[RMDB]
The record gives the reactivity of an RNA of 170 nucleotides to 2A3 and DMS. The DMS profile rests on 6,886 reads. 2A3 adducts were read by reverse transcription with SuperScript II with manganese. The data come from the RNA Mapping Database (RMDB), library 15KLIB. For DMS the reverse transcriptase was MarathonRT. Conditions: 150 mM KOAc, 10 mM MgCl2 and 150 mM bicine (pH 8.5), 24 C.
RNA sequence: GGGAACGACUCGAGUAGAGUCGAAAAACGUUGAUAUGGAUUUACUCCGAGGAGACGAACUACCACGAACAGGGGAGACUCUACCCGUGGCGUCUCCGUUUGACGAGUAAGUCCUCAGUCAACAUGCUACGUGACCGGUUCGCCGGUCACAAAAGAAACAACAACAACAAC
Reactivity to 2A3 in 0.01 (KOAc 150mM, MgCl2 10mM, bicine 150mM(pH8.5), 24C), signal-to-noise 3, nucleotides 027 to 129: a000c110g000u010u000g000a000u000a030u120g000g000a000u000u010u010a010c010u000c000c000g010a020g010g000a020g030a000c010g000a020a060c090u230a080c080c010a020c010g040a090a010c030a110g010g010g000g000a020g010a040c010u020c010u040a100c040c030c000g010u000g000g000c000g000u010c000u020c010c000g000u020u030u060g010a000c010g000a010g000u010a000a010g000u000c010c000u000c000a020g030u010c000a000a010c000a010u080g060c000u070a040c060
Reactivity to DMS in 0.01 (KOAc 150mM, MgCl2 10mM, bicine 150mM(pH8.5), 24C), signal-to-noise 1, nucleotides 027 to 129: a120c000g020u010u010g000a070u020a000u050g010g040a010u000u000u000a050c030u000c010c030g010a000g000g030a000g040a080c000g060a150a060c100u080a270c080c010a000c010g090a110a300c220a100g010g010g030g060a000g000a020c050u000c080u140a170c120c080c010g060u000g000g000c010g020u020c030u010c000c030g020u000u000u000g060a090c300g010a010g020u000a030a020g000u010c000c000u030c020a090g020u030c000a000a000c010a080u080g020c050u020a070c120